RNA sequence: GGGAACGACUCGAGUAGAGUCGAAAAAAGAGGAAAGAAGAACACGGACGCGAACCCGUAAGUGGAACCCUGAUCCUUUAUUGGGGGGUACACUCGAGGAGUGGAAGGCGCUGCCCGGGGGGAACCGCUUAAAGACGUUGUUCGCAACGUCUUUAAGAAAAGAAACAACAACAACAAC
Reactivity to DMS in 0.01 (KOAc 150mM, MgCl2 10mM, bicine 150mM(pH8.5), 24C), signal-to-noise 1, nucleotides 027 to 126: a110a080g000a110g010g000a020a010a080g010a040a050g000a050a090c060a060c140g000g020a130c040g000c020g000a060a080c090c030c000g000u000a090a010g040u000g020g000a150a090c020c010c010u000g000a050u010c140c100u000u000u010a060u020u000g010g010g010g010g000g010u000a120c040a010c040u010c080g020a130g020g010a060g000u000g010g010a090a080g020g000c020g030c070u000g000c010c020c020g020g010g030g000g010g010a120a120c090c090g010